RNA sequence: GGGAACGACUCGAGUAGAGUCGAAAAGCGGCCCGUCUUGAAACACGGACCAAGGAGUCUAACAUCCACGCGAGUGUUCGGGUGUCAAACCCGUGCGCGCAGUGAAAGCGAACGGAGGUGGGAGCCCUUAGAUCUGCACGUUCGCGUGCAGAUCUAAAAAAGAAACAACAACAACAAC
Reactivity to 2A3 in 0.01 (KOAc 150mM, MgCl2 10mM, bicine 150mM(pH8.5), 24C), signal-to-noise 2, nucleotides 027 to 126: g000c030g000g080c020c000c000g030u000c010u000u130g090a060a060a000c080a030c080g020g000a000c000c000a000a150g050g000a100g050u000c000u060a040a020c030a090u020c020c000a020c040g130c000g010a050g080u060g060u050u000c000g020g020g000u070g060u180c140a080a080a040c010c000c000g000u000g000c000g000c000g040c040a020g050u020g240a030a090a020g030c050g020a070a020c080g080g040a100g000g030u020g000g020g010a020g030c010c000c010
Reactivity to DMS in 0.01 (KOAc 150mM, MgCl2 10mM, bicine 150mM(pH8.5), 24C), signal-to-noise 2, nucleotides 027 to 126: g010c050g020g020c030c000c000g000u050c090u010u020g040a130a090a130c300a050c200g000g050a100c030c110a200a120g000g000a050g000u000c040u020a230a020c180a220u000c000c040a110c040g000c080g000a050g000u000g020u020u000c050g020g010g000u000g050u020c170a030a300a070c070c010c020g010u000g000c030g000c000g070c140a070g040u010g050a040a030a040g010c110g000a100a010c030g000g020a140g000g100u000g000g040g000a200g030c030c020c010